Source: RMDB library M2PK50, as collected in RNAgym. Structure probing data (2A3 and DMS) for a 177-nucleotide construct. For DMS the reverse transcriptase was MarathonRT. For 2A3 the reverse transcriptase was SuperScript II with manganese. For DMS, 1,780 sequencing reads were counted.
RNA sequence: GGGAACGACUCGAGUAGAGUCGAAAAUAAGUCUAGUUCGCUAGACUUACUAUCCGGAAAACAGCCUCCCGGCUCGAUCAGGCGGAUUCCGUCCAAGCGCUGCAACACACGUAUUCGUACGUGUGAAUUUAGAACAAAGCUUCGGCUUUGUUCUAAAAAAAGAAACAACAACAACAAC
Reactivity to 2A3 in 0.01 (KOAc 150mM, MgCl2 10mM, bicine 150mM(pH8.5), 24C), signal-to-noise 1, nucleotides 027 to 126: u040a000a000g010u000c000u010a020g000u030u040c150g000c120u020a010g000a020c000u000u010a020c010u010a030u040c020c010g090g000a070a110a020a020c010a030g000c000c020u090c020c050c030g070g020c000u020c010g020a070u100c070a000g010g010c060g000g100a200u230u000c050c050g030u000c020c020a080a030g000c060g000c080u090g060c010a150a040c030a020c000a010c010g000u010a020u040u100c170g020u030a010c010g000u000g010u010g030a000a010
Reactivity to DMS in 0.01 (KOAc 150mM, MgCl2 10mM, bicine 150mM(pH8.5), 24C), signal-to-noise 2, nucleotides 027 to 126: u000a000a000g000u000c000u000a010g000u010u010c200g030c000u000a000g000a010c000u000u000a010c070u000a100u000c020c040g020g000a070a050a090a110c120a050g010c020c000u010c010c050c040g020g010c060u000c030g020a070u000c120a080g010g030c050g020g000a150u010u000c040c040g010u010c020c060a090a110g020c100g000c060u000g000c110a070a230c000a000c000a000c010g000u000a020u000u010c140g010u000a000c000g000u010g020u000g000a030a050